Chemical mapping of a 177-nucleotide RNA with 2A3 and DMS. Reactivities are given for positions 27 through 126. For DMS the reverse transcriptase was MarathonRT. For 2A3, 816 sequencing reads were counted. The DMS profile rests on 1,113 reads. Conditions: 150 mM KOAc, 10 mM MgCl2 and 150 mM bicine (pH 8.5), 24 C. Source: RMDB library OK2TRN, as collected in RNAgym. 2A3 adducts were read by reverse transcription with SuperScript II with manganese.
[RMDB]
RNA sequence: GGGAACGACUCGAGUAGAGUCGAAAAACGCUCAAUGAGCCAGAAUCACUGACACUUGUUGAGCCACUCAUCGAUUUAGAGUCACUUUCAGAAUUAGAUUCACUUACACUUUCUGAAUCAUUUACAGAAUAAUUGGUGUCUUCGGACACCAAUUAUUAAAAGAAACAACAACAACAAC
Reactivity to 2A3 in 0.01 (KOAc 150mM, MgCl2 10mM, bicine 150mM(pH8.5), 24C), signal-to-noise 1, nucleotides 027 to 126: a000c060g020c000u020c000a000a010u030g000a000g020c000c040a010g080a260a180u190c100a100c140u010g030a000c010a010c130u020u000g010u010u000g010a000g000c010c000a080c020u100c000a040u080c010g020a010u010u040u150a040g010a010g040u000c000a040c100u000u090u040c030a030g060a050a110u100u090a030g030a100u110u070c030a020c140u080u270a030c100a020c160u070u070u040c010u050g030a030a040u030c030a030u110u220u110a110c070a050g220
Reactivity to DMS in 0.01 (KOAc 150mM, MgCl2 10mM, bicine 150mM(pH8.5), 24C), signal-to-noise 2, nucleotides 027 to 126: a150c300g010c000u030c000a050a000u010g000a010g000c040c030a060g020a190a120u030c290a060c030u000g020a060c070a070c050u000u000g000u000u000g000a010g020c030c050a150c210u000c250a060u000c060g000a040u000u010u000a080g010a070g020u000c020a080c110u000u000u010c040a100g010a070a050u000u030a150g000a050u000u010c030a030c130u020u020a140c130a070c180u000u050u010c030u000g020a020a000u010c020a060u020u000u010a170c230a110g020